[RMDB]
RNA sequence: GGGAACGACUCGAGUAGAGUCGAAAAAAGAAAAUGGCUUAAAUAGUUGGAAGCAGGCUGGGAGCAGAAGAAAGAAAUGCCAUGUUACUUCUCAUGUCUAUUGGCAUAUGUUUGGUGAACUAAACAAGAAUCAGAGUACAUUCGUGUACUCUGAUUCAAAAGAAACAACAACAACAAC
Reactivity to 2A3 in 0.01 (KOAc 150mM, MgCl2 10mM, bicine 150mM(pH8.5), 24C), signal-to-noise 3, nucleotides 027 to 126: a000a020g130a040a060a020a000u100g000g020c020u120u110a050a090a110u110a250g060u110u080g070g010a040a000g000c040a020g010g040c010u030g000g000g060a040g020c020a000g010a100a010g040a030a090a020g080a040a120a010u060g000c020c010a000u030g040u080u040a050c050u080u080c030u020c060a030u060g030u010c040u070a130u110u100g000g030c040a010u050a050u090g090u030u030u050g090g000u120g050a110a070c020u020a110a000a000c020a000a070
Reactivity to DMS in 0.01 (KOAc 150mM, MgCl2 10mM, bicine 150mM(pH8.5), 24C), signal-to-noise 4, nucleotides 027 to 126: a040a050g010a090a050a100a060u000g000g000c010u000u000a080a100a120u010a070g010u000u000g010g010a090a050g020c060a030g010g010c050u000g000g000g010a070g010c040a040g010a080a060g010a070a070a080g000a060a060a040u010g000c010c010a010u000g010u000u000a070c090u000u000c060u000c120a070u000g010u010c060u010a090u010u000g020g000c000a030u010a040u000g010u000u000u000g010g010u010g000a070a050c090u000a030a040a050c150a080a120
Background:
Conditions: 150 mM KOAc, 10 mM MgCl2 and 150 mM bicine (pH 8.5), 24 C. The record gives the reactivity of an RNA of 177 nucleotides to 2A3 and DMS. For DMS the reverse transcriptase was MarathonRT. 2A3 adducts were read by reverse transcription with SuperScript II with manganese. High DMS reactivity at an A or C suggests that its Watson-Crick edge is free.